[RMDB]
RNA sequence: GGGAACGACUCGAGUAGAGUCGAAAACGUGGUGCGCACCGCGAUCAGCUAUCUCGGUGCCGAGGACCCGGACGAGGACGACGCCGCGGCCAACCGGGCCAAGGCGAUGCGCAUGAUGGCGGUGUUGGCCGUUAAAGGGAUUCGUCCCUUUAACGGCAAAAGAAACAACAACAACAAC
Reactivity to 2A3 in 0.01 (KOAc 150mM, MgCl2 10mM, bicine 150mM(pH8.5), 24C), signal-to-noise 1, nucleotides 027 to 126: c060g110u180g010g130u160g000c100g000c000a000c000c000g000c080g000a030u050c010a010g040c000u040a050u240c050u010c050g230g130u200g100c000c000g000a030g040g040a060c000c070c010g010g000a030c010g010a050g040g010a020c010g020a070c050g020c070c000g000c020g000g000c000c000a050a060c060c070g150g020g000c000c010a010a000g050g000c010g000a000u010g000c030g000c000a020u090g000a010u050g070g050c050g000g040u070g060u110u070g050
Reactivity to DMS in 0.01 (KOAc 150mM, MgCl2 10mM, bicine 150mM(pH8.5), 24C), signal-to-noise 4, nucleotides 027 to 126: c060g030u030g030g020u000g000c160g010c010a010c000c000g010c050g020a020u000c020a090g000c070u020a100u000c040u010c060g010g000u000g020c010c020g000a170g010g020a140c160c030c010g010g000a140c070g020a110g010g000a160c090g000a100c040g020c030c020g010c300g000g040c010c000a080a100c160c180g000g000g020c010c030a070a300g020g020c000g020a030u000g020c140g020c060a090u000g030a050u000g000g010c040g010g000u000g020u000u010g010